An RNA of 207 nucleotides, treated with DMS and 2A3 and read out base by base. For 2A3 the reverse transcriptase was SuperScript II with manganese. The RNA was probed in 150 mM KOAc, 10 mM MgCl2 and 150 mM bicine (pH 8.5) at 24 C.
[RMDB]
RNA sequence: GGGAACGACUCGAGUAGAGUCGAAAAACUUAAUUCUGCCAUUAUAGAGCAAAAGCAGGCAUAGUCAAUAAAUACAGAAAUAAGUUUGGCUGUGUUCCAAUAAAAGUUCAUAUAUGGACACUGAAAUUUGAUGUCACAUAAAAUUGUUCCUGUGAUAAGGACUAAAUUAUUUCGAUAAUUUAGUCCUAAAAGAAACAACAACAACAAC
Reactivity to DMS in 0.01 (KOAc 150mM, MgCl2 10mM, bicine 150mM(pH8.5), 24C), signal-to-noise 2, nucleotides 027 to 156: a040c050u010u000a060a100u020u000c000u010g000c010c020a160u010u010a120u000a070g030a190g030c050a070a100a120a140g000c100a060g020g000c020a080u000a060g030u000c030a010a110u000a050a070a130u000a300c050a080g000a020a060a110u000a040a080g000u000u000u000g020g020c030u000g030u000g000u020u010c080c040a080a080u000a040a020a100a160g010u000u000c010a080u020a180u000a080u000g030g000a050c020a050c080u000g000a040a020a140u000u000u000g010a120u000g020u020c000a050c080a050u000a020a050a070a060u000u000g040u000u000c010c010u000g000u020g020a100u000a140
Reactivity to 2A3 in 0.01 (KOAc 150mM, MgCl2 10mM, bicine 150mM(pH8.5), 24C), signal-to-noise 3, nucleotides 027 to 156: a000c040u080u040a020a030u180u000c000u020g030c020c000a040u110u060a080u160a130g070a020g010c030a060a090a100a000g050c050a030g050g000c000a020u000a010g000u020c000a020a030u080a120a120a030u210a140c070a080g180a090a140a060u120a200a020g090u020u020u010g010g000c020u000g000u010g000u090u120c020c000a030a010u100a090a110a010a000g010u020u030c020a020u040a010u020a020u150g020g010a050c030a020c100u070g080a090a160a220u160u130u120g090a100u060g010u040c010a000c020a110u180a080a120a070a070u110u100g020u020u020c000c000u030g010u120g040a030u210a130